An RNA of 207 nucleotides, treated with 2A3 and DMS and read out base by base. The data come from the RNA Mapping Database (RMDB), library ARCHII. DMS adducts were read by reverse transcription with MarathonRT.

RNA sequence: GGGAACGACUCGAGUAGAGUCGAAAACCGUCGGGGACGGCGGUCCGCGGCGUGCGCCCGCAGGGGCGUUCCGUCGUGGUUCGACGGUGGCAACCCGCCAGGCACGGAAGUGAGCAGCGGACCACCGAACGCCCGUCGCUCGACGGGUCGCGGGGUGGCUUAGUUAAAAGUUCGCUUUUAACUAAGCAAAAGAAACAACAACAACAAC
Reactivity to 2A3 in 0.01 (KOAc 150mM, MgCl2 10mM, bicine 150mM(pH8.5), 24C), signal-to-noise 2, nucleotides 027 to 156: c000c000g010u000c000g000g000g000g020a000c000g000g000c010g020g000u000c000c000g000c000g000g000c010g010u010g000c000g010c010c000c010g010c140a090g000g000g000g020c000g000u010u030c080c000g010u000c000g010u010g020g000u020u040c050g020a020c000g000g010u000g010g000c090a100a030c010c010c000g010c000c000a080g040g010c010a000c020g090g170a190a120g030u020g020a040g010c030a000g000c010g000g020a090c010c000a000c000c010g000a030a000c000g010c030c070c000g000u000c010g050c060u010c000g010a000c000g000g000g010u040c040g010c070g020g020g000g020u090g040
Reactivity to DMS in 0.01 (KOAc 150mM, MgCl2 10mM, bicine 150mM(pH8.5), 24C), signal-to-noise 2, nucleotides 027 to 156: c010c000g010u000c010g000g010g020g010a060c010g030g010c000g020g000u000c000c000g030c020g000g030c020g000u000g000c020g000c010c000c000g000c300a210g030g000g000g020c000g010u000u000c300c020g040u000c020g030u010g010g020u000u000c070g000a190c000g010g050u000g010g020c020a110a130c110c020c050g030c010c060a170g000g000c010a060c020g000g010a180a250g030u000g000a070g040c050a150g010c000g030g000a160c010c010a040c010c010g010a060a040c120g010c070c010c020g040u000c000g170c050u000c030g010a010c010g010g000g020u000c020g030c090g000g010g020g010u010g000
The RNA was probed in 150 mM KOAc, 10 mM MgCl2 and 150 mM bicine (pH 8.5) at 24 C.